[RMDB]
RNA sequence: GGGAACGACUCGAGUAGAGUCGAAAAGAAACCUUAACUUCUGUUUCUGUUGAAAAAGGAGCAUUAACAUCAACAUAUUCAUUUGUUAAGAGUACCUCAUUAACAAGUUUUUCACUAAAUAAAGCAGCUUAAGGUACGGAUUCGUCCGUACCUUAAGAAAAGAAACAACAACAACAAC
Reactivity to DMS in 0.01 (KOAc 150mM, MgCl2 10mM, bicine 150mM(pH8.5), 24C), signal-to-noise 2, nucleotides 027 to 126: g010a110a120a070c050c020u010u000a030a030c040u000u010c030u000g010u000u000u000c030u000g010u000u010g010a040a060a070a120a080g000g010a100g020c080a050u000u000a040a100c170a140u000c020a020a040c030a040u000a050u010u010c040a020u000u000u000g010u000u000a010a040g000a130g010u000a100c090c030u000c120a050u000u000a020a030c120a060a040g010u000u020u010u010u010c050a060c060u000a030a060a070u010a020a050a090g030c140a170g000
Reactivity to 2A3 in 0.01 (KOAc 150mM, MgCl2 10mM, bicine 150mM(pH8.5), 24C), signal-to-noise 1, nucleotides 027 to 126: g020a040a050a000c010c000u000u000a010a020c010u020u030c020u010g040u000u000u000c020u010g000u000u050g070a060a040a050a050a050g100g000a080g000c030a090u000u230a040a050c010a120u000c020a000a020c000a010u020a000u040u040c010a010u000u010u040g000u030u000a030a010g030a030g020u020a050c030c000u020c010a070u110u150a080a090c070a060a130g060u090u030u020u110u140c030a050c050u080a170a050a110u300a100a080a020g190c040a010g130